[RMDB]
RNA sequence: GGGAACGACUCGAGUAGAGUCGAAAAGGCGGAAUGACGAUGACGUCGCCCGGCAGCAGAUGGACAUCGUCCUUCACCGCGCCGCGCGUGAGAAAGCCGUAGACGUCGAGCGCGGCGAUCUGCCGGAGCUAAAUGAUCGUUUCGACGAUCAUUUAGCAAAAGAAACAACAACAACAAC
Reactivity to DMS in 0.01 (KOAc 150mM, MgCl2 10mM, bicine 150mM(pH8.5), 24C), signal-to-noise 4, nucleotides 027 to 126: g020g000c020g020g010a110a050u000g020a020c040g010a050u000g020a120c020g020u000c020g020c140c020c020g000g000c020a040g010c200a110g000a020u000g000g020a140c030a050u010c100g020u000c000c140u000u000c030a060c080c070g000c010g000c010c000g000c080g010c010g000u010g010a110g000a080a090a130g010c030c060g020u010a100g020a100c070g000u000c030g010a130g000c010g020c020g000g000c010g020a050u010c010u000g000c010c000g020g000a200
Reactivity to 2A3 in 0.01 (KOAc 150mM, MgCl2 10mM, bicine 150mM(pH8.5), 24C), signal-to-noise 3, nucleotides 027 to 126: g060g020c030g030g030a120a100u240g020a040c030g050a040u050g030a010c020g010u010c020g010c020c020c000g050g020c010a030g020c030a040g020a060u050g020g000a060c000a100u080c120g030u000c020c000u090u070c040a050c000c030g020c010g000c010c020g000c000g000c000g030u130g010a100g100a120a120a020g030c050c030g040u040a090g040a140c050g060u070c030g010a040g000c000g010c000g000g000c010g010a050u000c000u000g000c010c000g020g020a020